Record summary: An RNA of 177 nucleotides, treated with 2A3 and DMS and read out base by base. It was measured as part of the RMDB library OK2TST. For 2A3, 9,399 sequencing reads were counted. For DMS the reverse transcriptase was MarathonRT.
RNA sequence: GGGAACGACUCGAGUAGAGUCGAAAAGAGCGGUCAGCGUCGAUCGUGCGACGCAGGAUCACACUGGCCUGCUCAACCAGCAGACGCCGUAGCCGGCCGGCCCAUUCAUCUUGCGGCAGCGAAAGGAUCAUCAUAUCCCAUUCGUGGGAUAUGAUGAAAAAGAAACAACAACAACAAC
Reactivity to 2A3 in 0.01 (KOAc 150mM, MgCl2 10mM, bicine 150mM(pH8.5), 24C), signal-to-noise 5, nucleotides 027 to 126: g010a000g000c020g000g020u010c010a000g000c010g070u080c140g020a010u010c100g120u020g020c040g120a120c200g020c010a000g110g000a010u010c000a000c000a000c010u010g000g000c000c070u100g000c000u000c000a000a030c010c000a010g050c020a020g020a120c040g010c030c010g050u050a020g030c020c010g050g030c010c020g020g020c000c020c010a060u140u150c030a080u040c040u070u110g040c020g030g000c030a020g030c010g070a070a050a060g090g030a070
Reactivity to DMS in 0.01 (KOAc 150mM, MgCl2 10mM, bicine 150mM(pH8.5), 24C), signal-to-noise 6, nucleotides 027 to 126: g000a030g030c020g010g020u000c010a010g030c010g000u000c160g020a020u000c020g010u000g010c010g020a210c220g010c000a020g000g000a010u000c010a040c010a040c020u000g000g010c000c010u010g020c010u000c010a070a100c030c020a110g000c100a140g010a110c080g000c030c030g010u000a130g010c060c050g000g020c060c040g000g000c010c020c040a110u010u000c120a070u000c090u010u010g010c040g010g020c040a100g010c060g000a070a090a110g010g000a180